[RMDB]
RNA sequence: GGGAACGACUCGAGUAGAGUCGAAAACAAGCGGAUCCUGCCCAGGCCGCUGACCCUGAUCGAGGAUCCCAUGAGCCAGCUCAACCGCCUGAUGCAGUGGGAUAUGAACCAGAUCGACGAUCGGGAGACUCCUUCUAACAUUCGUGUUAGAAGGAGUAAAAGAAACAACAACAACAAC
Reactivity to DMS in 0.01 (KOAc 150mM, MgCl2 10mM, bicine 150mM(pH8.5), 24C), signal-to-noise 9, nucleotides 027 to 126: c210a100a020g000c010g000g000a130u030c020c020u030g010c050c050c040a270g000g000c000c000g000c000u000g000a190c100c010c020u010g010a030u010c010g010a160g010g000a060u000c000c010c010a010u000g000a300g000c010c020a030g000c040u010c140a130a140c160c150g000c270c030u000g000a030u040g020c000a300g000u010g010g000g010a030u000a040u020g010a100a160c090c070a080g000a050u010c040g010a250c070g010a030u000c010g000g000g010a140g010
Reactivity to 2A3 in 0.01 (KOAc 150mM, MgCl2 10mM, bicine 150mM(pH8.5), 24C), signal-to-noise 9, nucleotides 027 to 126: c100a040a010g000c010g020g020a200u240c000c010u050g050c010c010c010a000g000g020c000c000g010c010u020g030a060c010c000c020u030g000a010u010c010g030a050g070g040a020u000c000c000c000a010u030g010a010g030c000c010a010g000c020u080c110a120a180c080c060g110c020c020u050g010a090u180g000c010a010g010u010g000g010g000a010u020a060u110g050a030a070c050c020a050g040a200u140c050g060a070c020g010a020u010c000g010g000g000a020g050